[RMDB]
RNA sequence: GGGAACGACUCGAGUAGAGUCGAAAACAGAAUGGGAAAGUGCUGAGCACAGACACUUGUCCAGAUUCACUGACAACCUCAAACUUCAGCUGCCGCUCAUGGCACCAUUUCAGCGAAUGGGGUGGGACACAGGUACCCAGUUCGCUGGGUACCUGUGAAAAGAAACAACAACAACAAC
Reactivity to 2A3 in 0.01 (KOAc 150mM, MgCl2 10mM, bicine 150mM(pH8.5), 24C), signal-to-noise 1, nucleotides 027 to 126: c080a020g090a080a130u060g000g000g000a060a090a000g040u010g000c010u010g030a120g160c110a050c020a300g250a060c020a010c030u050u060g060u050c010c000a010g030a100u070u080c100a040c150u060g070a040c030a020a060c050c010u050c070a050a080a260c060u120u090c060a040g030c080u010g020c020c050g040c060u090c090a150u260g000g000c000a020c010c010a010u060u080u000c040a030g000c090g150a070a030u020g050g000g000g000u080g040g050g020a010
Reactivity to DMS in 0.01 (KOAc 150mM, MgCl2 10mM, bicine 150mM(pH8.5), 24C), signal-to-noise 2, nucleotides 027 to 126: c130a090g000a100a040u000g010g000g000a090a040a060g000u000g020c040u000g000a270g010c130a100c130a020g000a100c000a010c040u000u000g010u030c000c060a080g000a140u000u000c070a080c080u000g000a020c130a100a040c020c040u000c040a040a030a130c140u000u000c110a050g030c040u000g000c040c020g000c140u000c180a020u010g000g000c070a140c040c040a110u000u000u000c030a040g010c050g000a050a060u010g000g070g000g010u000g000g020g000a220